[RMDB]
RNA sequence: GGGAACGACUCGAGUAGAGUCGAAAAUCCACUAUGAAUCUAGUCACUAAAUAAACACAAUUAGCUACUGUGUGUAAUAGUGAGUGUUGAUAACACAAUAUAAUAGUAUAGUUUUGGAAGAUUAUACGCGCCCUUGCUCCGUUCGCGGAGCAAGGAACUGGUACAAACUGUUCGCAGUUUGUACCAGAAAAGAAACAACAACAACAAC
Reactivity to 2A3 in 0.01 (KOAc 150mM, MgCl2 10mM, bicine 150mM(pH8.5), 24C), signal-to-noise 3, nucleotides 027 to 156: u030c050c010a020c060u190a180u180g150a110a010u000c110u110a040g110u050c010a000c000u030a030a040a090u040a050a060a010c010a000c010a030a130u130u090a080g080c110u180a070c040u020g010u020g010u020g000u020a020a040u000a020g020u010g030a030g010u030g030u010u030g080a200u140a220a020c010a000c010a080a050u140a010u080a220a160u120a160g010u010a010u000a010g010u030u020u100u170g110g020a110a050g020a090u030u020a020u060a040c050g020c030g090c020c000c010u000u000g000c000u000c000c010g030u070u030c150g010c030g100g000a010g000c000a000a000g010g000a010a000
Reactivity to DMS in 0.01 (KOAc 150mM, MgCl2 10mM, bicine 150mM(pH8.5), 24C), signal-to-noise 1, nucleotides 027 to 156: u000c000c020a230c090u000a140u000g000a120a160u000c030u010a120g060u000c000a030c000u010a050a000a070u000a130a140a020c010a020c010a070a040u000u010a230g040c190u000a030c010u030g020u000g020u020g010u000a110a300u000a000g040u010g000a060g070u020g040u000u010g020a080u010a060a130c100a040c000a040a050u010a110u000a150a300u000a080g000u000a010u000a000g000u000u000u000u000g010g010a190a150g000a040u000u010a020u000a010c000g000c050g050c100c020c000u000u000g010c000u000c010c010g100u000u000c300g070c060g040g000a080g000c030a000a010g000g000a050a000